[RMDB]
RNA sequence: GGGAACGACUCGAGUAGAGUCGAAAAUAGUAGUAGCCUGACCACUUGAAGGUAUAGGUGGUAGUGAACCAUUGGGUUUUAAAGUAGUUUCCAGAAGCCCCUAUCCAUCAUAUAUUCAGGGUAGGACGUUUCCUAUCAAGUUCGCUUGAUAGGAAACAAAAGAAACAACAACAACAAC
Reactivity to 2A3 in 0.01 (KOAc 150mM, MgCl2 10mM, bicine 150mM(pH8.5), 24C), signal-to-noise 1, nucleotides 027 to 126: u080a010g080u000a010g030u010a060g040c010c030u040g080a040c000c000a050c080u050u120g090a130a020g080g000u170a120u110a140g060g000u010g000g000u040a030g030u020g050a020a000c010c010a060u070u080g020g000g030u030u020u000u110a070a080a020g000u040a030g020u010u060u000c020c030a020g060a050a010g020c050c000c000c000u020a000u020c010c010a020u070c050a010u130a010u050a050u170u190c010a020g020g000g000u010a000g010g040a000c020
Reactivity to DMS in 0.01 (KOAc 150mM, MgCl2 10mM, bicine 150mM(pH8.5), 24C), signal-to-noise 3, nucleotides 027 to 126: u010a120g020u010a060g000u000a130g030c020c020u000g010a060c090c040a080c090u000u000g000a110a070g000g020u020a040u010a050g010g010u000g000g000u010a030g020u000g000a060a070c030c060a180u000u010g010g020g010u000u010u000u010a030a100a160g000u010a110g010u000u000u000c040c030a160g000a130a150g000c150c050c000c000u000a010u000c010c000a090u010c100a080u000a130u000a130u010u000c130a060g010g000g000u000a030g020g000a110c140